[RMDB]
Source information: Chemical mapping of a 207-nucleotide RNA with DMS and 2A3. The reactions ran in a buffer of 150 mM KOAc, 10 mM MgCl2 and 150 mM bicine (pH 8.5), at 24 C. It was measured as part of the RMDB library M2RFOK.

RNA sequence: GGGAACGACUCGAGUAGAGUCGAAAAAGCACGGUUUUUGAGGACGCAUUUUGUCCGUGCGGUAAUGCCCUCCUUUACACUUUCUCGCAUGGUGCGGGAGUGUGGAGCGGAAACAAAAGCUAGUCUCGAUAGGCGGUUAACUUCGGUUAACCGCCAACAUACGUAAGUUCUUCGGAACUUACGUAUGAAAAGAAACAACAACAACAAC
Reactivity to DMS in 0.01 (KOAc 150mM, MgCl2 10mM, bicine 150mM(pH8.5), 24C), signal-to-noise 2, nucleotides 027 to 156: a070g010c000a020c000g000g000u000u000u000u000u000g000a060g020g010a020c020g000c100a140u000u010u010u000g020u000c000c000g030u000g010c020g000g000u020a030a050u010g010c000c000c020u010c010c000u020u020u000a030c000a020c010u000u000u000c010u000c010g020c000a300u010g050g040u000g010c010g000g000g010a000g010u000g020u000g010g010a030g000c130g000g000a060a050a020c010a020a050a070a050g030c070u010a120g010u000c010u010c080g010a140u000a170g030g010c010g030g000u000u000a000a020c000u010u010c300g030g000u000u000a010a000c010c010g010c000c000a000a020
Reactivity to 2A3 in 0.01 (KOAc 150mM, MgCl2 10mM, bicine 150mM(pH8.5), 24C), signal-to-noise 7, nucleotides 027 to 156: a000g000c000a000c000g000g010u000u000u000u000u010g080a110g010g020a020c060g030c140a190u000u000u000u010g010u000c010c000g000u000g000c010g030g040u200a060a050u300g020c010c000c000u020c000c000u070u130u050a010c000a000c010u110u200u060c020u030c010g050c040a110u250g270g020u280g120c000g000g000g000a010g000u010g000u010g000g000a020g030c170g010g020a030a010a000c000a000a000a000a000g050c020u080a030g010u000c010u000c030g050a130u120a150g000g000c010g000g000u000u000a000a000c010u040u060c200g010g000u000u000a000a000c030c000g000c000c000a000a000
The 2A3 profile rests on 8,668 reads.
DMS adducts were read by reverse transcription with MarathonRT.